[RMDB]
RNA sequence: GGGAACGACUCGAGUAGAGUCGAAAAGGACAGAAGUGUACGUCUAAGUGCGUAGGUAUUGGAACUGUAGGCAAAUCCGCAGAUCUAGCUGAAACAUGAGUGAUAACCGCGUCUUCGGACAAGGGAACCAUACAAGGGAGUUCGCUCCCUUGUAUGGAAAAGAAACAACAACAACAAC
Reactivity to DMS in 0.01 (KOAc 150mM, MgCl2 10mM, bicine 150mM(pH8.5), 24C), signal-to-noise 7, nucleotides 027 to 126: g020g000a080c070a080g000a070a100g020u010g020u020a010c100g010u000c020u010a080a260g010u010g010c010g000u000a130g000g010u030a050u010u010g000g010a050a050c030u000g010u020a070g020g000c160a090a110a090u020c030c020g000c030a030g000a060u000c030u000a050g010c020u000g010a080a120a070c060a030u010g000a140g010u000g000a060u010a080a220c020c010g000c300g000u000c020u000u030c090g010g000a030c060a030a280g010g000g000a070a150
Reactivity to 2A3 in 0.01 (KOAc 150mM, MgCl2 10mM, bicine 150mM(pH8.5), 24C), signal-to-noise 9, nucleotides 027 to 126: g090g010a020c060a050g120a170a030g120u070g030u140a010c050g010u010c040u080a130a050g030u040g030c020g010u020a030g030g000u050a150u110u140g020g010a030a040c020u030g030u120a210g070g000c080a080a050a120u140c010c000g000c020a010g000a020u000c010u020a010g020c010u020g010a030a040a000c030a050u100g030a030g120u100g040a050u040a080a060c010c000g030c010g030u010c000u030u090c200g030g010a010c010a020a020g030g000g000a010a030
Overview:
This 177-nucleotide RNA was probed chemically with DMS and 2A3. For DMS the reverse transcriptase was MarathonRT. Conditions: 150 mM KOAc, 10 mM MgCl2 and 150 mM bicine (pH 8.5), 24 C. It was measured as part of the RMDB libraries RFM100 and RFMREP.